[RMDB]
RNA sequence: GGGAACGACUCGAGUAGAGUCGAAAAGCCAACGUUCGCGUUGGCAAAAAGCGUACUACAAGCGGUGAAGCUCCCACCGUUGAAAGGAUCCCAAAUAGGAUCCUGGAGGUGUUCGGAGUGGAGCUUGUAUCGCAAAAAAUCACCGUUCGCGGUGAAAGGGACUGUACGUAUUCGUACGUACAGUCCCAAAAGAAACAACAACAACAAC
Reactivity to 2A3 in 0.01 (KOAc 150mM, MgCl2 10mM, bicine 150mM(pH8.5), 24C), signal-to-noise 1, nucleotides 027 to 156: g000c000c000a000a000c020g000u080u140c290g010c020g080u020u040g000g010c020a040a000a000a000a000g010c020g090u090a020c030u020a000c060a000a000g000c020g210g300u040g020a050a010g000c000u020c000c000c000a000c000c000g160u280u050g010a010a010a010g000g000a000u030c080c060c070a020a300a000u180a000g000g000a010u020c000c000u060g000g000a010g020g000u030g000u070u300c070g000g000a030g000u020g000g000a000g000c020u000u010g000u000a010u050c000g100c010a120a000a000a000a000a000u050c000a020c020c000g000u010u110c240g000c070g080g000u030g000a130a050a030
Chemical mapping of a 207-nucleotide RNA with 2A3. Values are in units of 0.01, from 0 to 300, in steps of 10. The RNA was probed in 150 mM KOAc, 10 mM MgCl2 and 150 mM bicine (pH 8.5) at 24 C. The 2A3 profile rests on 649 reads.